Chemical mapping of a 177-nucleotide RNA with 2A3.
[RMDB]
RNA sequence: GGGAACGACUCGAGUAGAGUCGAAAACAAGCAGACCCCAGCUUUGGGGCGCGACAACGAUACCGGCCGCGCCGACCUGCCACUUGCCGCUGCCCAGCGACUCGUCCGUCGCCGUCGGCAGGACGACGCUGCGCUCGAGCUUCGGCUCGAGCGCAGCAAAAGAAACAACAACAACAAC
Reactivity to 2A3 in 0.01 (KOAc 150mM, MgCl2 10mM, bicine 150mM(pH8.5), 24C), signal-to-noise 2, nucleotides 027 to 126: c020a050a000g080c000a000g000a180c000c000c000c020a070g050c110u300u170u040g050g000g020g000c010g010c000g050a070c000a110a000c040g020a060u050a130c010c000g020g080c030c000g020c000g000c040c020g030a030c000c000u000g060c080c000a040c010u070u100g090c000c030g000c030u150g030c000c020c000a010g040c000g000a010c080u000c030g100u000c000c090g000u110c030g000c040c020g300u300c090g010g020c010a040g000g020a000c000g000a000c010